About this RNA
Source: RMDB library OK2TST, as collected in RNAgym. The record gives the reactivity of an RNA of 177 nucleotides to DMS and 2A3. The RNA was probed in 150 mM KOAc, 10 mM MgCl2 and 150 mM bicine (pH 8.5) at 24 C. DMS (dimethyl sulfate) methylates the pairing face of unpaired adenines and cytosines. Reactivities are given for positions 27 through 126. For 2A3, 35,714 sequencing reads were counted.
[RMDB]
RNA sequence: GGGAACGACUCGAGUAGAGUCGAAAAGCAAACGAUCUAUAAUCACUAUCGCGACAAGGAAGCCCUGCUGGCCGCGGUUAUCGAUGAUGCCAUCAAGCGCAUGAGCGCAAGCCUCCUUGCGGUGCUAGACUACUAUUAGUUUCGACUAAUAGUAGUCAAAAGAAACAACAACAACAAC
Reactivity to DMS in 0.01 (KOAc 150mM, MgCl2 10mM, bicine 150mM(pH8.5), 24C), signal-to-noise 9, nucleotides 027 to 126: g010c060a050a110a200c080g000a030u010c110u000a100u010a120a100u000c090a110c120u000a060u000c040g010c040g010a110c050a040a030g010g010a060a060g010c010c190c090u000g010c090u000g010g010c030c040g010c020g010g010u000u010a060u010c040g010a050u000g010a130u010g010c030c010a050u000c050a070a140g010c030g020c010a110u010g010a120g020c010g020c030a140a130g000c020c020u000c020c010u000u000g010c040g010g020u000g010c090u000a090
Reactivity to 2A3 in 0.01 (KOAc 150mM, MgCl2 10mM, bicine 150mM(pH8.5), 24C), signal-to-noise 9, nucleotides 027 to 126: g050c030a070a060a050c050g030a030u010c060u160a150u130a240a110u130c050a030c120u070a040u100c030g020c010g120a150c060a030a010g020g010a020a020g010c010c000c040u040g020c020u010g020g000c010c010g010c030g030g060u150u150a130u230c040g050a110u050g020a050u130g020c010c000a020u040c050a080a050g000c000g000c040a050u240g150a040g060c010g000c010a020a000g000c010c000u000c010c000u010u020g000c010g030g010u020g010c010u060a040